[RMDB]
RNA sequence: GGGAACGACUCGAGUAGAGUCGAAAAGAAGAUAAGGUGGUGUAAUGGUAAGAAUGCAGAUGUUAGAGUCAGGCUAACCAGGAUUCAAAUUUCAGCAGUUUAGGAGAAUUACUGAACCUAUUGAGCCUAGUUUCCCCAUUGUACCUGCUGCCUUAUAGAUCGAGUUUUACUUCGGUAAAACUCGAUCAAAAGAAACAACAACAACAAC
Reactivity to 2A3 in 0.01 (KOAc 150mM, MgCl2 10mM, bicine 150mM(pH8.5), 24C), signal-to-noise 1, nucleotides 027 to 156: g070a010a000g080a060u030a020a000g000g020u000g000g000u010g030u220a170a180u190g000g000u020a020a010g090a300a000u130g020c150a070g070a210u170g190u150u220a150g000a030g080u070c050a000g020g000c000u000a040a020c000c030a020g010g010a000u020u020c020a000a040a280u130u080u050c000a050g080c070a050g150u010u040u170a080g020g010a180g110a170a000u050u100a100c060u020g000a020a020c060c000u050a190u060u110g070a040g040c020c000u010a040g010u000u000u000c000c060c070c000a070u100u110g020u060a000c020c000u000g020c040u020g000c000c000u020u030a050u080a080